[RMDB]
RNA sequence: GGGAACGACUCGAGUAGAGUCGAAAAGUAUAUGACUUCGGUCAUAUACAAAGGCCGAUCGAAGGCCAACAGCCACUUCAACGCCAACCGAUCAAGAAGAAAAAAGAUGCACCUUCGGGUGCAUCAAUCCACAAGUAAGGUUCGCCUUACUUGUGGAAAAAGAAACAACAACAACAAC
Reactivity to DMS in 0.01 (KOAc 150mM, MgCl2 10mM, bicine 150mM(pH8.5), 24C), signal-to-noise 2, nucleotides 027 to 126: g000u000a000u000a000u000g000a040c010u000u010c180g030g010u010c000a020u000a000u000a010c010a070a180a110g000g000c030c040g000a120u010c120g000a150a100g020g020c010c020a020a060c150a060g000c040c040a070c090u000u020c060a080a100c120g000c000c010a030a110c040c020g030a160u000c120a040a090g000a070a100g010a010a060a080a100a080a100g000a010u000g010c010a000c000c000u000u020c160g010g010g030u000g010c010a010u000c000a040a070
Reactivity to 2A3 in 0.01 (KOAc 150mM, MgCl2 10mM, bicine 150mM(pH8.5), 24C), signal-to-noise 1, nucleotides 027 to 126: g000u020a010u010a020u030g010a010c010u030u050c170g060g000u000c000a010u020a010u010a010c000a080a050a000g010g030c000c040g020a050u130c120g110a140a020g030g000c010c020a010a000c010a000g030c020c000a040c010u060u060c030a050a020c040g030c020c010a050a050c070c010g060a080u170c100a070a080g030a050a060g040a070a150a020a000a000a010g030a000u000g000c000a000c010c020u040u040c300g100g000g000u000g040c000a010u030c010a040a010